[RMDB]
RNA sequence: GGGAACGACUCGAGUAGAGUCGAAAAUACAUGGAGGAAAUGCCAUGGCGGUGGAUGUACGUCCAUCGAGCCGGUUUGAUGAUUAUUUCCCUGAUUAUCAAUUUGGCUGCGGAUGAUCAUACUCCUCAAUAAACAUGGUCAGUUCGCUGACCAUGAAGCACGUUUCAGAGUUCGCUCUGAAACGUGCAAAAGAAACAACAACAACAAC
Reactivity to 2A3 in 0.01 (KOAc 150mM, MgCl2 10mM, bicine 150mM(pH8.5), 24C), signal-to-noise 1, nucleotides 027 to 156: u200a000c080a030u090g050g000a010g030g050a000a070a010u140g000c000c000a130u230g080g010c030g020g010u050g000g040a040u000g130u290a070c200g020u000c000c000a010u000c010g000a000g000c000c020g070g000u010u000u010g000a000u000g000a000u010u010a000u020u010u020c020c010c000u000g000a000u000u000a000u000c000a000a000u000u000u170g010g000c030u200g020c050g030g040a110u080g010a010u070c030a000u090a210c010u000c010c010u040c030a070a120u180a160a100a040c000a000u020g000g000u000c000a020g000u010u050c070g030c090u000g000a020c000c000a000u000g000a000a000
Description:
The record gives the reactivity of an RNA of 207 nucleotides to 2A3. The data come from the RNA Mapping Database (RMDB), library RFM130. For 2A3, 584 sequencing reads were counted. Reactivities are given for positions 27 through 156. 2A3 adducts were read by reverse transcription with SuperScript II with manganese. The RNA was probed in 150 mM KOAc, 10 mM MgCl2 and 150 mM bicine (pH 8.5) at 24 C.